[RMDB]
RNA sequence: GGGAACGACUCGAGUAGAGUCGAAAAAGGACAGUUUGUUAGCAAAGCUCCGUUCUCUACCUAAAUUUGUUUUAGGAGAAAAGUUCGGUGUAGACUUCAAACUAACAAUGUAUUCACGUUCAGUGAGCGCAGUAUUACCGUUCGCGGUAAUACUGCGAAAAGAAACAACAACAACAAC
Reactivity to 2A3 in 0.01 (KOAc 150mM, MgCl2 10mM, bicine 150mM(pH8.5), 24C), signal-to-noise 2, nucleotides 027 to 126: a000g130g030a050c070a020g000u000u020u020g050u090u050a010g000c050a020a150a020g010c000u000c010c000g000u020u000c030u030c010u080a300c000c000u040a030a030a060u200u170u200g170u120u060u010u000a010g000g050a020g030a000a140a010a020g020u000u000c020g050g000u020g020u060a080g020a170c000u010u010c020a000a020a000c000u010a010a020c070a030a080u120g040u070a130u070u070c000a010c070g040u260u200c040a050g000u020g020a040g090
Reactivity to DMS in 0.01 (KOAc 150mM, MgCl2 10mM, bicine 150mM(pH8.5), 24C), signal-to-noise 2, nucleotides 027 to 126: a160g010g000a110c200a030g010u010u020u000g030u010u010a010g010c030a050a210a280g000c020u000c000c000g010u000u000c000u010c020u000a210c000c010u010a000a010a030u000u000u000g010u010u000u000u010a000g000g000a020g000a100a060a100a040g000u010u000c000g000g000u000g010u000a060g010a280c030u010u000c060a060a030a050c000u000a040a150c110a030a040u010g030u000a050u000u000c000a010c020g010u000u010c180a070g000u000g000a060g000
Annotation:
Conditions: 150 mM KOAc, 10 mM MgCl2 and 150 mM bicine (pH 8.5), 24 C. This 177-nucleotide RNA was probed chemically with 2A3 and DMS. It was measured as part of the RMDB library OK2TST. 2A3 adducts were read by reverse transcription with SuperScript II with manganese. For 2A3, 1,507 sequencing reads were counted.